[RMDB]
RNA sequence: GGGAACGACUCGAGUAGAGUCGAAAAUCAAAGGGGCCCAACAAGUGGGCACACUCCCUGACAUCCUCAGGACCUCCUCUCUGGUUCUGAUUGUCAGAAUCAGAUUUACUUCUACCUCACUUGGCCUUGACAUGUGCACUUCAAUUUCUCAAGUGUAACUGCGGAUUAUGUUCGCAUAAUCCGCAGUAAAAGAAACAACAACAACAAC
Reactivity to 2A3 in 0.01 (KOAc 150mM, MgCl2 10mM, bicine 150mM(pH8.5), 24C), signal-to-noise 2, nucleotides 027 to 156: u030c010a000a040a020g050g000g040g030c090c040c020a010a030c050a060a040g060u030g010g020g050c040a030c010a000c030u120c040c010c000u010g040a010c020a050u090c010c060u030c010a010g030g050a110c010c000u090c020c040u180c070u050c120u060g000g000u000u000c000u010g040a040u000u250g050u090c000a000g030a010a030u000c010a000g010a020u150u020u130a090c040u140u010c050u070a040c000c030u030c000a020c000u010u020g020g010c020c000u030u080g020a050c040a090u120g020u030g020c000a010c030u040u050c120a040a270u060u120u100c080u010c030a050a000g050u030g020u120a050
Source information:
Structure probing data (2A3) for a 207-nucleotide construct. It was measured as part of the RMDB library OK3TST. Conditions: 150 mM KOAc, 10 mM MgCl2 and 150 mM bicine (pH 8.5), 24 C. The 2A3 profile rests on 906 reads.